[RMDB]
Notes:
An RNA of 207 nucleotides, treated with 2A3 and read out base by base. Conditions: 150 mM KOAc, 10 mM MgCl2 and 150 mM bicine (pH 8.5), 24 C.
RNA sequence: GGGAACGACUCGAGUAGAGUCGAAAAAGCACGGUUUUUGAGGACGCAUUUUGUCCGUGCGGUAAUGCCCUCCUUUACACUUUCUCGCAUGGUGCGGGAGUGUGGAGAUGAAACAAAAGCUAGUCUCGAUAGGCGGUUAACUUCGGUUAACCGCCAAGGACUUGUAAUGCUUCGGCAUUACAAGUCCAAAAGAAACAACAACAACAAC
Reactivity to 2A3 in 0.01 (KOAc 150mM, MgCl2 10mM, bicine 150mM(pH8.5), 24C), signal-to-noise 1, nucleotides 027 to 156: a000g010c020a020c010g000g000u050u050u000u020u050g060a080g070g000a010c050g020c170a240u020u020u000u000g000u020c010c000g000u000g000c000g060g020u090a050a060u090g070c000c000c000u020c000c000u040u010u000a030c030a010c000u090u210u000c010u020c010g070c080a160u250g170g070u250g140c040g000g010g010a000g010u000g010u000g000g000a000g010a030u090g010a020a120a000c000a000a000a000a040g040c020u040a080g010u000c050u010c080g110a210u110a100g000g000c000g000g000u010u000a000a000c000u030u060c080g010g010u000u000a000a000c000c000g000c000c000a000a010